RNA sequence: GGGAACGACUCGAGUAGAGUCGAAAAAGAACUCUUAUCUUCCUGCUUAGAAGAGGAGUCUCCUGGACGCUUCCGCCCGCUCGGGAUGGGCCUCAGUGCCGACGAGGAGUCCGCAGGUGGGAGGAUCAACGUACAUAGUUCGCUAUGUACAAAAGAAACAACAACAACAAC
Reactivity to DMS in 0.01 (KOAc 150mM, MgCl2 10mM, bicine 150mM(pH8.5), 24C), signal-to-noise 9, nucleotides 027 to 129: a020g030a050a030c020u010c010u010u020a130u010c000u010u010c000c080u030g050c180u040u040a110g000a040a020g020a000g000g010a030g010u020c030u010c030c000u000g000g000a110c120g010c060u030u000c040c050g010c000c000c000g040c050u000c090g030g020g030a070u030g030g040g030c000c020u020c090a070g000u020g040c050c030g010a080c070g010a030g000g000a120g020u000c030c080g050c080a060g020g040u020g000g010g020a030g000g000a060u030c110a080a050c120
Reactivity to 2A3 in 0.01 (KOAc 150mM, MgCl2 10mM, bicine 150mM(pH8.5), 24C), signal-to-noise 9, nucleotides 027 to 129: a000g070a050a020c010u010c000u060u080a080u080c000u020u020c020c030u070g140c100u180u210a050g010a070a010g010a040g020g000a010g030u010c020u010c020c010u030g060g030a050c080g020c130u070u010c020c010g020c010c000c010g050c030u060c070g100g010g070a120u080g070g090g030c000c010u110c070a100g030u130g170c030c030g060a100c030g020a030g040g010a020g030u010c020c040g020c060a010g000g020u020g010g000g000a000g010g000a040u070c050a030a060c090
This 170-nucleotide RNA was probed chemically with DMS and 2A3. The DMS profile rests on 120,565 reads.